[RMDB]
This 177-nucleotide RNA was probed chemically with DMS. Source: RMDB library TTRINS, as collected in RNAgym. The reactions ran in a buffer of 150 mM KOAc, 10 mM MgCl2 and 150 mM bicine (pH 8.5), at 24 C.
RNA sequence: GGGAACGACUCGAGUAGAGUCGAAAAGAUAUGGAGGAGGAGCGUAAGAUCCUUGGAUUUAUGGCGGUGCCAUAUCGGAAACGAUAUGUCUCGCCAUUGUCAGGAUUAUCGCUCCUCCUCCUAAGUCCGAGUAGGGAGGGUUCGCCCUCCCUACUCGAAAAGAAACAACAACAACAAC
Reactivity to DMS in 0.01 (KOAc 150mM, MgCl2 10mM, bicine 150mM(pH8.5), 24C), signal-to-noise 1, nucleotides 027 to 126: g000a050u010a300u010g000g000a060g010g000a020g000g020a010g010c000g020u020a090a210g040a010u000c010c010u000u000g050g010a040u010u010u000a000u000g000g000c000g000g010u000g030c110c010a000u000a000u000c000g010g000a170a110a220c000g000a000u000a010u000g000u000c010u000c010g010c010c000a010u000u000g000u020c030a030g010g010a010u000u010a270u000c020g000c000u000c000c010u000c000c000u000c000c000u000a010a070g000u000c020